[RMDB]
RNA sequence: GGGAACGACUCGAGUAGAGUCGAAAAGGAACAUCCUUCGGGAUGUUCCAUAGGCGGCGCCUCUCGCUAACCGGCGCGCAGAGGCGCGCAGCGCAGCUUGAAAGUAAGCCUAGUUCGCUAGGCUUAAUGCAAGAUACUGAUUCGUCAGUAUCUUGCAAAAAGAAACAACAACAACAAC
Reactivity to 2A3 in 0.01 (KOAc 150mM, MgCl2 10mM, bicine 150mM(pH8.5), 24C), signal-to-noise 2, nucleotides 027 to 126: g000g000a010a020c030a000u010c030c000u080u130c260g050g000g000a000u000g000u010u000c000c000a010u010a010g050g030c020g030g000c010g000c010c000u010c000u000c010g000c020u010a160a080c080c080g170g030c040g000c000g000c100a010g000a000g000g000c010g010c020g000c000a040g000c080g000c000a030g050c030u070u110g060a100a050a050g060u070a020a000g000c000c000u010a030g010u050u050c180g000c080u000a000g000g000c000u000u000a010a000
Reactivity to DMS in 0.01 (KOAc 150mM, MgCl2 10mM, bicine 150mM(pH8.5), 24C), signal-to-noise 4, nucleotides 027 to 126: g000g000a000a000c000a010u000c000c000u000u020c200g020g010g010a000u000g010u000u010c000c000a040u010a030g000g010c000g010g020c000g020c000c010u000c010u010c020g000c010u020a110a190c180c150g000g000c240g020c070g020c150a030g000a020g000g020c000g020c000g010c030a060g000c050g010c080a080g010c130u000u010g000a060a080a120g000u000a020a010g010c000c000u000a010g000u000u010c210g020c000u000a000g000g000c000u000u000a010a060
The data come from the RNA Mapping Database (RMDB), library M2PK50. Structure probing data (2A3 and DMS) for a 177-nucleotide construct. The DMS profile rests on 4,967 reads. Reactivities are given for positions 27 through 126. Conditions: 150 mM KOAc, 10 mM MgCl2 and 150 mM bicine (pH 8.5), 24 C.